[RMDB]
RNA sequence: GGGAACGACUCGAGUAGAGUCGAAAACGGAAGCAUUAAAACCAUUCGAGCUAGUCAAUGCGUGGCGUGUCUCUCCGCAGCGUGUUGGGGAAUGUAAAGAGUGACUAAGCAUGUAGUACCGAGGAUGAUAAGAGCAAUUCGUUCGCGAAUUGCUCAAGUGCAUGGAGUCGUUCGCGACUCCAUGCACAAAAGAAACAACAACAACAAC
Reactivity to 2A3 in 0.01 (KOAc 150mM, MgCl2 10mM, bicine 150mM(pH8.5), 24C), signal-to-noise 2, nucleotides 027 to 156: c070g030g050a070a000g010c120a040u160u120a030a030a080a070c020c010a040u090u080c020g080a040g060c060u110a070g100u120c070a020a020u060g000c030g040u030g000g030c020g050u160g020u000c020u000c000u000c080c000g000c000a000g010c020g030u050g020u020u050g010g010g000g010a020a050u080g020u170a090a000a000g030a000g010u040g000a010c030u020a060a030g010c020a030u080g030u110a040g020u040a090c010c040g020a080g060g000a040u130g050a010u080a230a150g000a010g010c000a000a000u000u000c000g010u010u070c110g000c010g060a000a000u000u000g000c010u000c000a000a000

The record gives the reactivity of an RNA of 207 nucleotides to 2A3. It was measured as part of the RMDB library M2RFPK.